RNA sequence: GGGAACGACUCGAGUAGAGUCGAAAAUGGAACCGCAGUUGGUUCCUCGGAACUAAACUCGUGGUUCCUGUGGUUCACACCUGACCUCCUGAGCAGAAAAGAAAAAAGAAGGCGGCUCGGAGGAGCGCAGGCAAAGUUAGUUCGCUAACUUUGCCUGAAAAGAAACAACAACAACAAC
Reactivity to DMS in 0.01 (KOAc 150mM, MgCl2 10mM, bicine 150mM(pH8.5), 24C), signal-to-noise 1, nucleotides 027 to 126: u040g010g000a000a000c000c000g080c020a000g000u000u000g020g030u000u000c000c020u000c240g090g000a000a000c000u000a050a000a000c020u000c090g100u000g000g000u000u010c000c000u000g040u000g010g010u000u040c130a100c110a120c040c020u020g000a150c000c010u010c010c010u010g000a040g020c000a120g020a080a050a090a180g040a000a050a090a050a090a210g010a150a170g000g010c250g020g040c000u010c000g010g010a030g020g000a010g000c190g000

Source: RMDB library VIROID, as collected in RNAgym.
Chemical mapping of a 177-nucleotide RNA with DMS.
DMS adducts were read by reverse transcription with MarathonRT.
High DMS reactivity at an A or C suggests that its Watson-Crick edge is free.
For DMS, 600 sequencing reads were counted.